[RMDB]
Chemical mapping of a 177-nucleotide RNA with DMS and 2A3. Conditions: 150 mM KOAc, 10 mM MgCl2 and 150 mM bicine (pH 8.5), 24 C.
RNA sequence: GGGAACGACUCGAGUAGAGUCGAAAACAGAAAGUGACGUAUCUUAUGACUCGGGCGUGCAACAGGGAUAUCCUUAAAAUUGCUUUCUGGAACGCUGGUGGGAUCAAUAAUAAAAUAGACGAGCUCAAUUAUCAGGGUCAUUCGUGACCCUGAUAAUAAAAGAAACAACAACAACAAC
Reactivity to DMS in 0.01 (KOAc 150mM, MgCl2 10mM, bicine 150mM(pH8.5), 24C), signal-to-noise 2, nucleotides 027 to 126: c040a040g000a040a030a010g010u000g000a130c150g000u010a040u010c020u000u000a160u030g000a110c030u000c020g010g040g030c090g040u000g000c080a050a050c090a110g000g000g000a060u040a020u000c100c050u030u000a040a040a070a170u010u010g040c050u000u000u000c010u040g010g000a040a060c020g020c060u000g030g040u010g000g000g000a060u030c090a080a080u050a070a070u040a040a070a070a020u010a070g000a040c110g000a080g000c050u010c070a070
Reactivity to 2A3 in 0.01 (KOAc 150mM, MgCl2 10mM, bicine 150mM(pH8.5), 24C), signal-to-noise 3, nucleotides 027 to 126: c010a010g100a030a080a010g020u050g050a020c070g050u050a040u010c030u120u180a170u140g040a070c020u000c050g050g040g000c040g000u040g010c030a080a050c040a100g060g000g070a120u060a020u150c010c030u140u170a010a090a030a050u050u110g060c010u000u020u030c020u000g040g000a000a050c070g010c020u020g020g000u070g040g010g000a030u060c050a010a060u100a120a040u120a020a090a040a040u090a020g100a050c070g000a010g010c020u010c050a000
DMS (dimethyl sulfate) methylates the pairing face of unpaired adenines and cytosines. For 2A3, 1,394 sequencing reads were counted.